[RMDB]
RNA sequence: GGGAACGACUCGAGUAGAGUCGAAAACGUCAGACGACGAAGUCGGUCCAUCUGCGGUAACAGACCGACAUAGAGUUCGAAGCAGAACGAACAACCGCAGAUACACGAUUGGAGUGUGAAUGAGAGAAUAAUAGCGCGAUUUCGAUCGCGCUAUUAUAAAAGAAACAACAACAACAAC
Reactivity to 2A3 in 0.01 (KOAc 150mM, MgCl2 10mM, bicine 150mM(pH8.5), 24C), signal-to-noise 1, nucleotides 027 to 126: c000g000u000c030a100g020a300c080g000a000c000g000a190a000g010u000c000g000g020u000c040c050a030u010c060u000g000c000g000g000u020a040a050c000a160g000a000c000c000g000a000c000a020u040a030g120a000g060u000u000c000g030a000a040g140c300a000g020a180a020c010g030a000a000c000a000a000c000c000g020c000a000g000a000u000a020c050a020c010g100a100u160u170g120g060a210g040u020g000u020g010a000a160u130g030a110g050a020g110a190
Reactivity to DMS in 0.01 (KOAc 150mM, MgCl2 10mM, bicine 150mM(pH8.5), 24C), signal-to-noise 2, nucleotides 027 to 126: c030g000u020c010a130g050a250c300g000a000c030g000a180a120g000u000c000g000g080u020c000c270a160u000c010u000g000c000g010g060u000a080a100c010a240g000a080c100c020g000a000c000a090u030a060g000a100g000u000u000c000g020a000a140g000c180a130g000a060a050c010g020a020a020c080a060a020c000c000g050c020a000g000a000u020a140c090a090c060g070a020u000u080g010g000a180g000u000g020u070g000a070a180u000g000a040g060a130g000a080